[RMDB]
RNA sequence: GGGAACGACUCGAGUAGAGUCGAAAAGUGAAGGCGUGAUGGCGUAAGCCGGCCGACUCCUGGGGCCCGUGAAAAGGGGGGCAGUUGGACCGUACCGAGAACCGACACAGGUGCCCUGGGUGAGUAGAAAGUAACAGAGGUUCGCCUCUGUUACUUUAAAAGAAACAACAACAACAAC
Reactivity to DMS in 0.01 (KOAc 150mM, MgCl2 10mM, bicine 150mM(pH8.5), 24C), signal-to-noise 7, nucleotides 027 to 126: g020u010g010a090a130g010g010c010g040u020g010a070u030g010g000c010g000u050a120a120g010c000c000g010g020c010c010g000a180c050u000c010c000u000g020g000g000g010c010c010c020g010u020g000a080a060a100a170g000g000g010g010g000g020c060a120g030u010u040g000g000a180c070c040g030u030a140c030c020g000a110g010a160a140c090c040g000a220c050a020c030a090g020g000u030g010c000c000c010u000g000g000g000u000g000a090g000u030a070g000
Reactivity to 2A3 in 0.01 (KOAc 150mM, MgCl2 10mM, bicine 150mM(pH8.5), 24C), signal-to-noise 3, nucleotides 027 to 126: g210u150g100a090a030g010g050c060g040u170g080a160u250g060g000c010g040u120a090a120g000c000c000g020g020c000c010g010a000c000u010c000c000u010g000g000g000g000c010c000c000g020u020g040a050a100a050a050g050g010g000g010g030g020c040a060g060u100u130g080g030a090c000c070g050u080a100c030c030g020a040g050a140a020c010c010g100a010c010a000c000a050g000g080u150g030c000c000c000u000g010g000g000u010g010a030g000u040a030g100